Overview:
The record gives the reactivity of an RNA of 207 nucleotides to 2A3 and DMS. Reactivities are rounded to 0.1 and cut off at 0 and 3. High 2A3 reactivity points to a flexible backbone, as in loops and unpaired stretches. The reactions ran in a buffer of 150 mM KOAc, 10 mM MgCl2 and 150 mM bicine (pH 8.5), at 24 C. The 2A3 profile rests on 603 reads. 2A3 adducts were read by reverse transcription with SuperScript II with manganese.
RNA sequence: GGGAACGACUCGAGUAGAGUCGAAAAUUGUAAAACAUGUAUGUGGAGGGAUGGAUACACAUGUGUGUAUAUAUCACGUAAUUAUUUUUUUAUUUUUCCAUCUCACAUAUUUGCAAAGCAUGUAUAUUUGUAAAUGAUGCUACAAUAUUUAUGGUUAUGGUGAUAUUAUGUUCGCAUAAUAUCACCAAAAAGAAACAACAACAACAAC
Reactivity to 2A3 in 0.01 (KOAc 150mM, MgCl2 10mM, bicine 150mM(pH8.5), 24C), signal-to-noise 1, nucleotides 027 to 156: u060u040g030u050a000a080a000a000c000a000u020g070u060a000u000g010u000g070g030a100g020g080g000a000u000g000g000a030u020a010c080a030c000a050u030g060u000g000u000g030u060a010u000a000u020a000u250c000a000c050g000u000a060a000u040u160a060u010u140u080u010u000u020u170a130u150u130u000u040u000c020c000a000u000c000u030c000a030c000a000u040a010u170u070u090g050c070a000a000a110g000c000a000u010g040u140a060u010a060u050u210u050g090u110a040a060a080u050g060a000u030g040c040u060a010c000a000a130u030a050u120u300u170a090u110g100g000u110u080a040
Reactivity to DMS in 0.01 (KOAc 150mM, MgCl2 10mM, bicine 150mM(pH8.5), 24C), signal-to-noise 1, nucleotides 027 to 156: u000u000g020u000a090a110a090a020c040a060u020g000u000a030u010g050u000g010g040a170g070g030g050a080u010g000g000a060u000a070c060a000c050a110u020g030u020g040u000g010u000a090u000a090u020a120u020c060a060c060g000u010a100a050u000u010a010u000u020u000u000u010u040u040a100u050u100u020u010u000c020c000a020u000c010u020c020a050c020a010u000a010u010u000u000g020c020a090a100a160g000c030a030u000g020u000a100u010a060u010u000u030g010u000a020a120a300u000g010a160u000g010c020u010a040c050a030a050u000a060u000u000u000a060u000g000g000u030u000a170